[RMDB]
RNA sequence: GGGAACGACUCGAGUAGAGUCGAAAAUGCCGCCUACCCGCAGAAGGACGGAAAGACCCUAUAGACCUUAACUGUAAGCUGUCAUUGUUUCUUCGGUUUUAAUGCUCAGAGUAAGUGGGAGACGCUGGGCUGUGUAGUAGUUCGCUACUACACAGCCAAAAGAAACAACAACAACAAC
Reactivity to DMS in 0.01 (KOAc 150mM, MgCl2 10mM, bicine 150mM(pH8.5), 24C), signal-to-noise 1, nucleotides 027 to 126: u010g040c000c000g000c060c010u000a090c010c000c040g090c130a060g020a100a000g000g120a040c170g000g010a020a110a070g000a060c060c040c010u020a090u010a000g030a030c010c010u010u020a110a140c020u030g000u040a020a060g090c000u000g000u000c060a160u040u000g000u040u010u050c000u020u000c300g000g000u040u020u020u070a080a000u060g000c000u010c030a110g000a070g060u010a040a060g060u050g030g000g030a020g000a000c020g000c020u040g000
Reactivity to 2A3 in 0.01 (KOAc 150mM, MgCl2 10mM, bicine 150mM(pH8.5), 24C), signal-to-noise 2, nucleotides 027 to 126: u130g030c010c000g000c000c000u000a010c000c010c010g030c020a000g080a050a010g110g010a020c020g060g020a060a120a000g060a090c000c010c040u040a040u020a040g050a020c050c010u040u220a080a040c020u120g020u060a040a040g040c010u010g030u030c030a140u090u080g010u000u000u030c000u020u000c000g060g000u000u030u040u090a150a090u080g000c030u040c030a050g030a000g150u070a120a060g010u070g020g050g000a090g000a000c000g010c100u100g010

About this RNA
Source: RMDB library RFM100, as collected in RNAgym. An RNA of 177 nucleotides, treated with DMS and 2A3 and read out base by base. For 2A3, 1,063 sequencing reads were counted. For DMS the reverse transcriptase was MarathonRT. For DMS, 1,280 sequencing reads were counted. High DMS reactivity at an A or C suggests that its Watson-Crick edge is free. For 2A3 the reverse transcriptase was SuperScript II with manganese. Reactivities are given for positions 27 through 126. High 2A3 reactivity points to a flexible backbone, as in loops and unpaired stretches. The reactions ran in a buffer of 150 mM KOAc, 10 mM MgCl2 and 150 mM bicine (pH 8.5), at 24 C.